[RMDB]
RNA sequence: GGGAACGACUCGAGUAGAGUCGAAAAACGGUACUCCUUACGAGGAGUACCGAUGUCGGAUAGCUUAUCAGACUGAUGUUGACUGUUGAAUCUCAUGGCAACAGCAGUCGAUGGGCUGUCUGACAAACUGUCGGUAGCUUUUCGAAGCUACCGACAGAAAAGAAACAACAACAACAAC
Reactivity to 2A3 in 0.01 (KOAc 150mM, MgCl2 10mM, bicine 150mM(pH8.5), 24C), signal-to-noise 3, nucleotides 027 to 126: a000c000g000g020u010a000c000u040c000c000u020u020a040c290g070a000g010g000a000g000u000a000c010c000g000a000u010g010u000c010g000g000a000u000a010g030c020u060u000a000u000c030a110g000a000c000u010g000a020u010g050u030u030g090a300c020u060g080u160u040g060a130a110u100c060u050c230a040u050g010g000c000a000a000c010a010g000c000a000g000u000c010g000a000u000g000g000g000c000u000g000u000c000u000g000a000c000a000a050a010